[RMDB]
RNA sequence: GGGAACGACUCGAGUAGAGUCGAAAAGAUAUGGAUACCCGGAGAGGGUAUGGGAGAUUGCGAAGGACUCGGAAACGAGUCCGAAGUAUAAUCUUUGAUCAUACCCUCUCCGUGGUAUCCUAAGUCACUAAAUGCUAAUGUUCGCAUUAGCAUUUAGAAAAGAAACAACAACAACAAC
Reactivity to DMS in 0.01 (KOAc 150mM, MgCl2 10mM, bicine 150mM(pH8.5), 24C), signal-to-noise 5, nucleotides 027 to 126: g010a060u000a300u010g010g000a020u000a010c000c000c030g000g000a030g010a020g000g000g020u000a000u000g000g000g010a010g010a020u000u000g010c030g010a270a300g000g000a020c010u000c000g000g000a140a100a240c000g000a020g010u000c000c000g000a040a260g010u000a050u010a050a010u000c000u000u000u010g010a080u020c000a010u000a000c010c010c010u000c000u000c000c000g010u000g000g010u000a000u000c000c010u000a000a080g020u000c050a300
Reactivity to 2A3 in 0.01 (KOAc 150mM, MgCl2 10mM, bicine 150mM(pH8.5), 24C), signal-to-noise 2, nucleotides 027 to 126: g000a010u070a050u140g010g000a010u050a020c010c030c040g000g000a010g020a010g030g000g140u010a010u000g010g000g010a010g000a030u050u050g080c050g140a170a050g000g010a000c000u000c000g010g030a050a070a070c010g020a010g000u000c000c010g010a010a000g010u040a060u150a210a080u060c020u300u290u090g070a080u130c000a010u010a010c010c010c000u000c000u000c010c010g000u020g000g010u000a000u000c000c000u000a000a000g010u000c000a000
An RNA of 177 nucleotides, treated with DMS and 2A3 and read out base by base.
2A3 adducts were read by reverse transcription with SuperScript II with manganese.
The data come from the RNA Mapping Database (RMDB), library TTRINS.
The reactions ran in a buffer of 150 mM KOAc, 10 mM MgCl2 and 150 mM bicine (pH 8.5), at 24 C.